[RMDB]
RNA sequence: GGGAACGACUCGAGUAGAGUCGAAAAGGAGUAGCUGGGACUACAGGCAUGUGCCACCAUGCCUGGCAAAUUUUGUGUUUUUAUUAGAGACGGGGUUUCUCCAUGUUGGUCAAGCAGGUCUUGAACUCCCAACCUUAGGUGUGAUCCGCCUGCCUCGACAGCAUAGUAAUUUCGAUUACUAUGCUGUAAAAGAAACAACAACAACAAC
Reactivity to 2A3 in 0.01 (KOAc 150mM, MgCl2 10mM, bicine 150mM(pH8.5), 24C), signal-to-noise 3, nucleotides 027 to 156: g070g010a020g010u060a030g040c030u070g050g000g030a070c030u060a020c050a000g010g000c000a010u030g030u110g130c040c010a030c050c000a010u000g000c000c000u000g000g020c030a040a070a080u100u150u070u040g050u020g020u030u050u000u040u090a090u050u120a050g010a040g000a030c050g030g000g000g000u000u070u030c010u000c010c000a030u060g020u020u010g010g020u020c000a010a010g000c060a050g020g110u020c010u020u040g010a020a030c020u050c060c010c010a020a040c030c050u090u110a080g000g020u060g040u030g050a030u020c020c020g030c040c040u080g000c020c020u030c010g030
Reactivity to DMS in 0.01 (KOAc 150mM, MgCl2 10mM, bicine 150mM(pH8.5), 24C), signal-to-noise 2, nucleotides 027 to 156: g010g000a080g000u000a060g020c030u000g000g020g010a110c020u000a040c000a000g000g020c000a040u000g000u010g020c080c070a150c170c000a000u000g010c000c000u000g010g020c050a060a090a120u000u000u010u000g030u010g030u010u000u000u000u000a060u010u010a130g010a080g010a040c020g020g010g020g010u000u000u000c020u010c020c020a110u000g000u010u000g020g030u000c030a020a080g010c070a060g020g020u000c040u000u000g000a100a060c040u000c080c010c030a060a070c080c080u000u010a060g020g060u010g020u010g010a150u000c040c080g000c030c020u010g030c040c010u000c020g030
The data come from the RNA Mapping Database (RMDB), library OK3TST.
An RNA of 207 nucleotides, treated with 2A3 and DMS and read out base by base.
The RNA was probed in 150 mM KOAc, 10 mM MgCl2 and 150 mM bicine (pH 8.5) at 24 C.
The DMS profile rests on 6,883 reads.
The 2A3 profile rests on 3,293 reads.